[RMDB]
RNA sequence: GGGAACGACUCGAGUAGAGUCGAAAACUUUGGUGAGGCCCUGUCUAGUAUAGCAAUCCACCAAGCAGGUGAUUUCACACAAUUCAGGUUCUCAUAGAAAAUGCGCCCUGACUUGACAGGUAUGGUCGAUCACCCGUACCUUCGGGUACGGGUGAUCAAAAGAAACAACAACAACAAC
Reactivity to 2A3 in 0.01 (KOAc 150mM, MgCl2 10mM, bicine 150mM(pH8.5), 24C), signal-to-noise 1, nucleotides 027 to 126: c000u080u000u040g090g000u000g120a060g000g000c010c000c000u000g010u000c000u010a030g020u000a040u010a180g060c100a050a050u080c060c000a020c060c000a030a000g060c050a030g150g000u110g000a000u000u050u160c020a040c000a000c020a080a110u070u040c000a000g020g010u100u100c090u000c000a020u190a060g280a000a000a000a000u150g000c000g090c030c030c020u020g030a030c050u030u070g000a020c000a100g030g050u000a070u070g050g000u030c080